[RMDB]
RNA sequence: GGGAACGACUCGAGUAGAGUCGAAAAGAUAUGGACUCAUGUAGGGAGCUCGUCGGAAACGACAGAGCAUCGAUCUACAGAGUCCUAAGUCAAAACUAUUAUUGUCCGUUCGCGGACAAUAAUAGAACAUAUACGCAUUCUUCGGAAUGCGUAUAUGAAAAGAAACAACAACAACAAC
Reactivity to DMS in 0.01 (KOAc 150mM, MgCl2 10mM, bicine 150mM(pH8.5), 24C), signal-to-noise 7, nucleotides 027 to 126: g000a040u010a300u010g000g000a010c000u000c000a090u010g020u000a010g000g000g000a050g020c000u000c000g000u000c000g010g000a080a090a140c010g010a010c000a100g040a000g020c000a090u000c120g000a070u010c000u000a000c010a030g010a010g010u000c000c000u000a010a060g010u000c040a080a090a120a180c000u000a010u000u000a010u000u000g000u000c000c000g020u010u010c270g020c010g010g000a010c000a000a000u000a010a000u000a000g000a090a150
Reactivity to 2A3 in 0.01 (KOAc 150mM, MgCl2 10mM, bicine 150mM(pH8.5), 24C), signal-to-noise 6, nucleotides 027 to 126: g010a010u040a040u120g000g000a000c000u010c080a300u040g000u000a010g010g080g010a010g000c000u000c000g000u000c000g010g040a060a040a040c020g010a010c160a150g010a000g000c010a100u190c030g060a120u000c010u010a010c010a010g000a000g000u000c000c000u000a030a000g040u010c030a010a010a130a140c000u000a000u000u000a000u000u000g000u000c010c010g040u030u080c300g010c010g090g000a000c000a000a000u000a000a010u000a000g000a010a000